[RMDB]
RNA sequence: GGGAACGACUCGAGUAGAGUCGAAAAGAUGGAAGUAAAAGAUCUAUAAUGUCUACAUACUUGACUGUUUUAAAGCAUACAAUAUGGAGAGGUGUAUUUCCAUCAUGAUCUGGUUUUGAGGGACUAAUUCCUAGUUUCAUCAUCCAUGAGAUUGUAGGUACAUCAAGCUAUUCGUAGCUUGAUGUACAAAAGAAACAACAACAACAAC
Reactivity to 2A3 in 0.01 (KOAc 150mM, MgCl2 10mM, bicine 150mM(pH8.5), 24C), signal-to-noise 6, nucleotides 027 to 156: g030a000u020g000g020a010a020g010u090a030a100a110a040g070a090u050c100u120a140u120a230a130u160g050u030c020u030a050c010a050u080a110c070u060u070g050a070c040u030g100u070u050u040u180a100a150a000g010c000a010u080a130c010a060a060u030a030u100g000g000a040g000a020g020g040u060g000u080a040u020u020u000c010c000a000u010c010a010u070g020a030u010c030u020g030g040u040u070u090u110g020a030g010g010g010a000c000u020a030a110u120u080c020c010u010a010g000u000u000u040c080a180u000c000a010u000c060c040a060u180g030a020g030a100u060u070g040u120a040g080
Reactivity to DMS in 0.01 (KOAc 150mM, MgCl2 10mM, bicine 150mM(pH8.5), 24C), signal-to-noise 3, nucleotides 027 to 156: g000a030u000g020g020a070a060g010u010a020a140a130a150g010a120u000c050u000a100u020a100a090u000g020u000c010u000a060c030a070u000a020c070u000u010g010a170c160u010g010u000u000u000u000a080a110a140g040c030a100u000a160c120a040a040u000a030u000g000g000a040g000a030g030g050u010g000u000a060u000u000u000c010c000a030u000c010a120u000g000a120u010c030u000g010g000u000u000u010u010g010a150g010g010g010a070c040u010a060a180u000u000c110c060u000a040g020u000u000u000c000a080u000c020a080u000c030c020a100u000g020a090g010a120u000u000g010u000a060g010

Structure probing data (2A3 and DMS) for a 207-nucleotide construct. Reactivities are rounded to 0.1 and cut off at 0 and 3. Values cover nucleotides 27 to 156. The RNA was probed in 150 mM KOAc, 10 mM MgCl2 and 150 mM bicine (pH 8.5) at 24 C. It was measured as part of the RMDB library OK3TST. The 2A3 profile rests on 3,984 reads.